[RMDB]
RNA sequence: GGGAACGACUCGAGUAGAGUCGAAAAGUGCAGAGUGAAAUUCAUAGGUGCUACGCCAAUGUGGCGCAAUGACCCGGUACUCCGCGCAGUCGCGCUGUAAACGUUCUGUGUUGGCGUUCAGGCCUCACCUCGCAGGAUAGUUCGCUAUCCUGCGAGGAAAAGAAACAACAACAACAAC
Reactivity to DMS in 0.01 (KOAc 150mM, MgCl2 10mM, bicine 150mM(pH8.5), 24C), signal-to-noise 1, nucleotides 027 to 126: g000u030g010c060a080g000a150g000u000g050a020a050a000u000u000c090a000u040a000g000g030u000g040c020u000a000c010g150c130c030a000a140u020g000u000g030g000c000g000c030a000a070u000g000a140c100c040c000g000g000u000a010c130u000c000c050g000c080g020c020a060g010u000c160g000c010g000c000u000g010u000a080a070a300c130g010u030u040c230u000g000u000g010u000u000g000g000c000g030u000u060c150a120g000g000c000c010u000c090a260